[RMDB]
RNA sequence: GGGAACGACUCGAGUAGAGUCGAAAAUAAGAAAAGAAGUAGUAAAAGAGGUUAGAGCAGAACCACAUAUUGUUUGGAGACCAAGUGCAUUAUCCAUUGUUUACGAUGAGGAAACAGAAGGUCCAAGUUACCAUCACAAGAUUAAAGAGAUCUACGAUACAUGACAUCUGUUCGCAGAUGUCAUGUAAAAAGAAACAACAACAACAAC
Reactivity to DMS in 0.01 (KOAc 150mM, MgCl2 10mM, bicine 150mM(pH8.5), 24C), signal-to-noise 2, nucleotides 027 to 156: u000a090a220g010a130a130a110a120g010a080a100g000u000a080g020u000a040a090a090a110g020a060g010g030u000u000a070g010a130g040c020a090g020a030a100c040c020a050c060a120u000a080u000u000g030u010u000u000g010g030a130g000a090c070c040a040a130g000u000g020c020a090u030u000a160u000c050c010a130u000u010g020u000u000u000a080c050g010a070u000g030a120g020g000a030a090a130c070a060g010a100a050g030g000u010c020c020a040a160g040u000u000a070c020c040a050u000c050a080c090a070a110g000a070u000u000a060a050a060g000a140g000a010u000c020u000a110c060g020a300
Reactivity to 2A3 in 0.01 (KOAc 150mM, MgCl2 10mM, bicine 150mM(pH8.5), 24C), signal-to-noise 3, nucleotides 027 to 156: u110a000a010g070a020a080a000a010g020a080a010g020u130a000g030u050a040a090a080a070g040a020g040g000u010u070a000g010a020g090c040a010g030a040a030c060c000a030c050a050u140a060u060u100g070u070u050u070g040g030a050g010a000c000c000a070a030g030u030g090c020a050u060u050a010u090c000c030a010u030u080g030u090u120u040a020c050g010a030u080g020a020g020g040a010a080a000c030a030g080a100a020g040g000u000c040c000a040a020g020u030u050a040c030c040a010u060c000a010c020a090a040g010a060u010u110a130a100a000g090a030g020a030u010c010u040a010c100g010a020
Structure probing data (DMS and 2A3) for a 207-nucleotide construct.
Conditions: 150 mM KOAc, 10 mM MgCl2 and 150 mM bicine (pH 8.5), 24 C.
Values are in units of 0.01, from 0 to 300, in steps of 10.
It was measured as part of the RMDB library OK3TST.